This 177-nucleotide RNA was probed chemically with DMS and 2A3. The 2A3 profile rests on 8,923 reads. The RNA was probed in 150 mM KOAc, 10 mM MgCl2 and 150 mM bicine (pH 8.5) at 24 C.
RNA sequence: GGGAACGACUCGAGUAGAGUCGAAAAGAUAUGGACUAUACUCAUCGAUCUUACGUAACAUCGUUUCGGAAACGAAACGUGGUAAGGGAGAGUACGUCCUAAGUCAAAACCGCGCUUCGGCGCGGAACCUAUAGGAACUCUUCGGAGUUCCUAUAGGAAAAGAAACAACAACAACAAC
Reactivity to DMS in 0.01 (KOAc 150mM, MgCl2 10mM, bicine 150mM(pH8.5), 24C), signal-to-noise 5, nucleotides 027 to 126: g010a040u010a300u000g000g010a000c000u000a300u000a030c000u000c000a230u000c140g010a080u000c000u000u000a010c000g010u000a050a090c140a010u000c010g020u000u000u000c000g000g010a060a090a130c000g010a000a000a010c000g010u010g010g010u000a000a010g010g000g000a050g010a020g010u000a020c300g000u000c000c000u000a050a110g010u010c030a070a060a080a130c000c010g010c010g010c010u000u010c210g020g000c000g000c000g000g000a010a020
Reactivity to 2A3 in 0.01 (KOAc 150mM, MgCl2 10mM, bicine 150mM(pH8.5), 24C), signal-to-noise 5, nucleotides 027 to 126: g030a010u080a040u140g010g010a000c020u040a030u050a280c000u030c040a300u300c180g070a090u060c020u020u010a020c010g100u080a080a040c040a300u250c050g010u000u010u000c010g020g010a080a050a040c010g000a010a000a000c010g000u010g000g010u010a020a030g030g000g010a040g010a000g010u000a010c030g010u000c010c010u030a150a020g030u040c020a010a010a120a210c010c010g000c000g000c000u110u100c290g100g000c000g000c000g000g000a000a010